[RMDB]
RNA sequence: GGGAACGACUCGAGUAGAGUCGAAAACAUCUAUUGUCGUCAAGUAAUUGGAUGCGGACCACGUGCCCGUAGCGUUCAAUGCUACGACGGUUGAGACCGCAAUAGGGAUUUUUGGGCGGCGAACUGACUCGUACUGAUCUUUCGAGAUCAGUGCGAGAAAAGAAACAACAACAACAAC
Reactivity to DMS in 0.01 (KOAc 150mM, MgCl2 10mM, bicine 150mM(pH8.5), 24C), signal-to-noise 5, nucleotides 027 to 126: c090a080u020c110u010a060u020u010g020u010c000g010u000c040a060a050g000u000a050a020u000u000g010g010a110u000g000c000g010g000a170c040c020a070c120g010u010g030c100c040c030g000u010a030g000c000g000u020u070c200a070a090u020g010c000u000a040c030g000a050c060g000g000u020u010g000a120g010a060c010c020g000c010a020a080u020a130g000g010g010a070u000u000u000u000u010g010g020g010c030g000g000c030g000a040a130c060u010g010a290
Reactivity to 2A3 in 0.01 (KOAc 150mM, MgCl2 10mM, bicine 150mM(pH8.5), 24C), signal-to-noise 6, nucleotides 027 to 126: c020a070u030c020u070a060u010u090g000u000c010g010u000c000a020a020g040u030a050a030u020u030g070g010a020u030g000c000g010g020a120c010c000a040c060g050u060g030c000c010c010g010u000a000g000c000g020u070u110c150a100a050u190g000c000u000a000c000g060a010c020g000g000u070u060g040a050g020a050c000c000g000c010a000a010u020a030g080g010g020a020u010u020u000u040u070g070g010g000c000g010g000c000g000a020a030c030u020g030a010
Notes
An RNA of 177 nucleotides, treated with DMS and 2A3 and read out base by base. For DMS, 17,222 sequencing reads were counted. The 2A3 profile rests on 17,015 reads. 2A3 adducts were read by reverse transcription with SuperScript II with manganese.